[RMDB]
RNA sequence: GGGAACGACUCGAGUAGAGUCGAAAAGAUAUGGAACGAAUGUAGAACUACAGCUACUAUUCGGAAACGAAUAGAGCUGCUACACUAUUCCUAAGUCAAAACUCAAUAACGUUCGCGUUAUUGAGAACCUGUUGCAUUAGUUCGCUAAUGCAACAGGAAAAGAAACAACAACAACAAC
Reactivity to DMS in 0.01 (KOAc 150mM, MgCl2 10mM, bicine 150mM(pH8.5), 24C), signal-to-noise 2, nucleotides 027 to 126: g000a070u000a300u010g010g020a000a010c130g000a060a040u000g000u000a000g000a110a030c120u000a300c010a020g000c000u000a150c000u010a000u010u000c000g020g010a130a050a200c000g010a030a000u000a000g010a070g010c000u000g030c010u000a020c010a010c070u000a300u000u000c000c000u000a080a210g020u000c010a050a050a040a120c010u000c000a020a000u000a020a010c000g020u010u010c230g030c000g020u000u000a000u000u000g000a020g000a040a160
Reactivity to 2A3 in 0.01 (KOAc 150mM, MgCl2 10mM, bicine 150mM(pH8.5), 24C), signal-to-noise 3, nucleotides 027 to 126: g020a020u070a030u120g020g010a040a030c070g070a300a300u070g000u010a030g010a060a060c150u240a080c250a010g020c010u180a240c010u000a300u020u000c020g030g020a040a050a000c000g020a010a020u010a000g010a010g000c000u000g000c000u010a010c000a010c030u050a110u080u010c000c000u030a120a050g040u000c010a000a010a090a260c000u000c010a010a010u010a000a000c010g000u030u060c290g000c000g130u000u010a010u030u000g010a000g000a000a020